Description:
An RNA of 207 nucleotides, treated with DMS and 2A3 and read out base by base. Values cover nucleotides 27 to 156. 2A3 adducts were read by reverse transcription with SuperScript II with manganese. The reactions ran in a buffer of 150 mM KOAc, 10 mM MgCl2 and 150 mM bicine (pH 8.5), at 24 C. DMS adducts were read by reverse transcription with MarathonRT.
RNA sequence: GGGAACGACUCGAGUAGAGUCGAAAAAUACAUUCCUGUGCCGGCAAUACAGUGUGUAUGGAGGUCUCAAUGGCUCGGAAGUGCCAGCAAACCGGCGUAGAUAUUAGCAGACGUAUGGGCGUAAGCCAAAAGAGAAUGAUGUUCGCAUCAUUCUCAACAUUACAUGCGGGUUCGCCCGCAUGUAAUGAAAAGAAACAACAACAACAAC
Reactivity to DMS in 0.01 (KOAc 150mM, MgCl2 10mM, bicine 150mM(pH8.5), 24C), signal-to-noise 2, nucleotides 027 to 156: a080u000a100c010a130u000u000c300c000u020g020u010g010c000c020g000g010c050a080a110u000a060c020a100g000u000g010u020g030u000a060u000g030g010a110g000g010u000c030u000c040a120a130u000g020g000c010u000c040g010g030a200a180g030u000g050c020c010a140g000c080a040a110a080c020c020g020g010c000g020u010a070g000a120u000a100u000u000a060g030c020a130g030a060c090g000u000a070u010g000g000g020c020g000u000a050a100g000c040c020a020a050a040a170g000a030g000a060a000u000g000a040u000g000u000u000c300g030c000a020u000c000a020u000u000c000u000c000a070a030
Reactivity to 2A3 in 0.01 (KOAc 150mM, MgCl2 10mM, bicine 150mM(pH8.5), 24C), signal-to-noise 4, nucleotides 027 to 156: a000u090a010c030a040u050u050c010c010u010g040u070g020c010c030g030g000c050a000a050u060a080c050a070g120u060g030u010g000u190a040u050g030g020a010g010g050u010c040u020c080a100a150u050g010g000c010u020c100g090g070a160a060g030u050g080c000c020a040g020c060a040a010a060c010c010g020g000c010g020u030a040g040a080u080a050u120u180a060g090c090a020g010a080c070g100u120a110u090g070g010g000c020g000u050a100a000g000c000c000a000a110a050a020g010a000g000a000a000u000g000a000u010g040u060u070c210g030c080a000u010c000a000u000u010c000u000c000a000a000